About this RNA: Chemical mapping of a 207-nucleotide RNA with 2A3. It was measured as part of the RMDB library M2RFPK.

[RMDB]
RNA sequence: GGGAACGACUCGAGUAGAGUCGAAAAAACUCAGCUAGGGAGAGUAUAACAUUCGUGUUGACGAGACCUAGACGAAACACAGAGGAAAAUUAUUAAUCACUGGAUAGUAUUAGUAAUGACUCUGUGUAAAACUCUUCUACGUUCGCGUAGAAGAGAAGCGUAGUGAAGAGUUCGCUCUUCACUACGCAAAAGAAACAACAACAACAAC
Reactivity to 2A3 in 0.01 (KOAc 150mM, MgCl2 10mM, bicine 150mM(pH8.5), 24C), signal-to-noise 1, nucleotides 027 to 156: a040a000c010u000c010a010g040c000u010a000g000g040g000a040g020a060g040u080a090u060a300a010c020a020u070u040c060g040u020g040u150u050g030a060c010g020a020g070a090c000c000u000a000g010a030c040g000a000a040a010c000a000c000a000g010a000g000g020a170a070a060a060u010u000a000u000u020a000a000u030c060a010c020u020g130g080a080u300a300g000u020a000u000u000a000g000u000a000a000u000g010a020c010u000c000u000g010u000g000u000a000a000a000a000c000u000c010u000u000c000u000a010c010g030u020u010c180g000c000g080u000a000g000a000a000g000a010g010a020a010
Conditions: 150 mM KOAc, 10 mM MgCl2 and 150 mM bicine (pH 8.5), 24 C. Values cover nucleotides 27 to 156. Values are in units of 0.01, from 0 to 300, in steps of 10. For 2A3, 722 sequencing reads were counted.